[RMDB]
RNA sequence: GGGAACGACUCGAGUAGAGUCGAAAACGGACCGGCUCAUCUCGACAAGGGGCGGCAGUCCUCAGUGCUCUUACUCUUUUCUGUAAAGAGGAGACUGCUGGACUCGCCGCCCAAGUCGAGCAUGAGCCACGUUCCGAGCGAAGGGAACGACGGGGAGGGUAAAUGUUUAGUUCGCUAAACAUUUACCAAAAGAAACAACAACAACAAC
Reactivity to DMS in 0.01 (KOAc 150mM, MgCl2 10mM, bicine 150mM(pH8.5), 24C), signal-to-noise 1, nucleotides 027 to 156: c050g000g010a020c070c040g040g000c020u000c000a030u010c020u000c000g020a090c010a120a300g000g000g040g020c020g080g000c040a080g000u010c000c050u000c010a060g000u010g010c090u010c020u000u000a300c030u010c020u030u030u000u000c250u010g000u010a020a030a040g010a100g020g000a040g000a080c030u020g000c150u030g060g010a030c000u000c170g060c010c030g000c000c000c000a000a060g000u000c000g000a000g060c100a010u010g020a040g000c000c010a000c030g000u030u000c000c010g020a100g030c100g030a180a100g010g000g020a100a040c020g000a170c040g010g000g020g040a240g010
Reactivity to 2A3 in 0.01 (KOAc 150mM, MgCl2 10mM, bicine 150mM(pH8.5), 24C), signal-to-noise 3, nucleotides 027 to 156: c030g020g030a030c040c040g010g030c000u000c000a000u000c000u000c000g000a010c030a120a190g000g000g010g020c010g000g000c000a000g000u000c030c000u010c010a080g010u190g250c030u020c000u100u230a290c010u030c000u070u070u100u090c170u290g300u300a030a010a010g000a000g000g000a000g000a000c000u010g040c080u020g020g000a000c000u020c090g000c000c020g010c000c000c000a000a000g000u000c000g000a000g000c010a010u000g000a000g000c000c000a000c000g000u000u000c010c000g010a040g050c090g080a100a050g030g020g010a070a050c020g060a030c040g040g000g000g020a080g070